Record summary: Source: RMDB library OK3TST, as collected in RNAgym. Structure probing data (DMS and 2A3) for a 207-nucleotide construct. Reactivities are rounded to 0.1 and cut off at 0 and 3.
[RMDB]
RNA sequence: GGGAACGACUCGAGUAGAGUCGAAAAUUUAGUCCAGGUCUGUCUACAGCUCUAACGUAUAUACACCCUUUGUAUAACAUGUCACGAAUUCAGCAUAAAGGGAUCUUCAGUGAUCUAAGUCAGGGGUCAGCAACCUUUUCUAAAAAGGACCAAAUAAGUCACUAUUAGCUUUCGAGCUAAUAGUGACAAAAGAAACAACAACAACAAC
Reactivity to DMS in 0.01 (KOAc 150mM, MgCl2 10mM, bicine 150mM(pH8.5), 24C), signal-to-noise 1, nucleotides 027 to 156: u020u000u000a170g010u000c000c020a170g010g010u000c010u000g000u000c010u000a050c080a100g000c020u000c060u020a070a000c100g030u000a150u000a170u020a110c080a180c080c030c050u010u020u040g050u000a140u000a070a120c080a060u000g020u000c000a190c110g000a100a170u010u000c050a060g020c090a150u000a040a030a080g000g000g000a050u000c020u010u000c100a120g060u010g020a110u000c060u000a070a170g010u000c050a030g020g010g010g040u020c020a120g000c020a070a090c010c010u020u000u000u000c230u020a030a080a060a040a060g010g040a090c060c050a030a040a130u000a060a180
Reactivity to 2A3 in 0.01 (KOAc 150mM, MgCl2 10mM, bicine 150mM(pH8.5), 24C), signal-to-noise 2, nucleotides 027 to 156: u050u070u030a020g000u000c020c010a000g020g020u000c030u040g050u050c010u040a050c020a020g000c000u010c010u070a150a040c020g060u040a020u000a000u020a200c010a050c010c100c000u090u070u100g040u020a050u000a070a040c050a070u120g040u060c030a000c110g060a050a070u160u090c050a070g010c030a080u120a090a110a040g050g020g020a040u000c000u060u060c020a100g090u010g050a020u000c050u060a100a020g020u020c020a000g010g000g030g020u010c030a000g040c000a030a120c000c010u060u040u060u090c140u130a140a130a000a000a010g080g000a020c000c050a030a110a000u200a200a010